[RMDB]
RNA sequence: GGGAACGACUCGAGUAGAGUCGAAAACACAACUUACUCAUGACAAUCAGAGUGAUCAAAAAAAUCCUCAAUAGUGUGGCAUUUGGAUCCAUUUAUCAUUACAUUUCCAUGGGACAGAGUCAUAAAACAAGUACAGCUACUUCGGUAGCUGUACUUGAAAAGAAACAACAACAACAAC
Reactivity to DMS in 0.01 (KOAc 150mM, MgCl2 10mM, bicine 150mM(pH8.5), 24C), signal-to-noise 2, nucleotides 027 to 126: c070a090c060a090a030c010u050u000a110c040u000c040a040u030g000a090c130a070a020u000c130a090g000a130g010u000g020a030u000c060a000a000a010a040a060a100a040u000c000c000u000c110a040a090u000a070g030u000g000u000g010g030c060a080u000u010u000g020g000a020u000c010c010a220u000u010u000a010u020c020a040u000u000a090c100a060u010u000u000c080c020a030u000g010g010g000a090c130a060g000a060g000u010c130a040u000a020a040a100a100
Reactivity to 2A3 in 0.01 (KOAc 150mM, MgCl2 10mM, bicine 150mM(pH8.5), 24C), signal-to-noise 2, nucleotides 027 to 126: c050a000c000a080a020c030u080u060a020c000u040c020a050u020g000a050c040a030a090u120c040a100g050a040g100u070g030a060u080c120a000a060a040a020a000a140a020u000c000c020u030c030a080a070u060a160g210u120g040u060g070g040c050a130u030u050u100g020g010a040u050c040c000a060u040u000u000a040u030c010a010u000u110a090c000a040u000u010u000c030c010a020u050g000g050g000a020c040a080g040a030g060u050c010a140u130a130a110a040a020